[RMDB]
RNA sequence: GGGAACGACUCGAGUAGAGUCGAAAACCAGCACCGAGAGGAGACAGCGGUGAGCGCGGCAAAGGCCACUCGGCGCGGGCAGGGGAGACCGGCCGGGACAGCUCAGCGACACGCACUCAGGCUGACUCUGAUCGAACUAAUUCGUUAGUUCGAUCAGAAAAGAAACAACAACAACAAC
Reactivity to DMS in 0.01 (KOAc 150mM, MgCl2 10mM, bicine 150mM(pH8.5), 24C), signal-to-noise 2, nucleotides 027 to 126: c000c000a080g000c110a130c110c040g000a040g010a140g000g000a050g050a230c030a050g000c000g000g040u020g000a020g010c040g000c000g010g000c000a080a270a080g000g010c010c120a190c020u020c000g000g000c000g000c000g000g000g030c050a140g000g030g010g000a060g000a110c000c000g020g050c000c010g020g010g010a140c170a130g030c020u010c070a300g050c220g000a100c080a200c080g050c050a050c010u000c020a050g000g020c000u000g000a080c030u000
Reactivity to 2A3 in 0.01 (KOAc 150mM, MgCl2 10mM, bicine 150mM(pH8.5), 24C), signal-to-noise 9, nucleotides 027 to 126: c000c000a010g050c020a040c020c040g060a060g010a020g150g030a050g030a070c030a020g010c010g050g160u030g010a030g010c040g000c030g030g000c050a150a130a130g190g000c010c000a040c010u010c000g020g000c220g090c020g130g010g000c050a140g050g090g010g000a060g020a020c000c000g010g000c010c000g010g010g020a100c080a030g000c010u030c070a030g040c020g070a060c030a020c120g010c010a010c010u010c010a000g040g010c020u020g020a060c020u000

Structure probing data (DMS and 2A3) for a 177-nucleotide construct. Source: RMDB libraries RFM100 and RFMREP, as collected in RNAgym. The RNA was probed in 150 mM KOAc, 10 mM MgCl2 and 150 mM bicine (pH 8.5) at 24 C. Reactivities are given for positions 27 through 126. For DMS the reverse transcriptase was MarathonRT.